[RMDB]
RNA sequence: GGGAACGACUCGAGUAGAGUCGAAAAAGCUCCUCAGAAUGAUAACACAGAGACCGGAGGAGGGCCAGUGCAGUAGGACUCCCACUGAGCUUGUUUAGCUUGUGUUAGCACUACGAGGUUACGAGUGGCUAGGCGAAAAAUUCGUUUUUCGCCUAGCAAAAGAAACAACAACAACAAC
Reactivity to 2A3 in 0.01 (KOAc 150mM, MgCl2 10mM, bicine 150mM(pH8.5), 24C), signal-to-noise 4, nucleotides 027 to 126: a000g030c020u030c000c010u000c000a030g070a120a040u040g040a040u030a110a000c040a010c000a030g090a010g100a200c030c050g070g030a020g000g030a060g010g000g000c010c000a010g030u060g060c050a060g020u200a070g040g080a060c020u040c020c000c000a040c040u040g020a030g000c000u100u070g050u110u240u140a010g020c030u030u010g010u010g000u040u010a010g020c010a000c010u050a050c050g010a000g070g000u050u110a030c050g030a070g090u040g070
Reactivity to DMS in 0.01 (KOAc 150mM, MgCl2 10mM, bicine 150mM(pH8.5), 24C), signal-to-noise 3, nucleotides 027 to 126: a060g000c050u010c020c000u000c020a090g000a200a120u020g020a060u010a020a060c110a060c030a070g000a130g000a150c100c120g010g000a100g020g000a060g010g020g000c030c000a050g000u020g000c210a060g010u020a040g010g000a300c060u000c060c080c010a050c080u030g010a040g000c010u020u000g000u010u010u010a040g030c040u000u030g020u000g000u000u010a040g010c110a060c020u010a160c090g000a060g020g000u010u000a050c070g000a100g030u000g010
Chemical mapping of a 177-nucleotide RNA with 2A3 and DMS. Reactivities are given for positions 27 through 126. Conditions: 150 mM KOAc, 10 mM MgCl2 and 150 mM bicine (pH 8.5), 24 C. In probing experiments dimethyl sulfate is read out at A N1 and C N3, which are open when not base-paired. It was measured as part of the RMDB library OK1LIB. The DMS profile rests on 3,887 reads.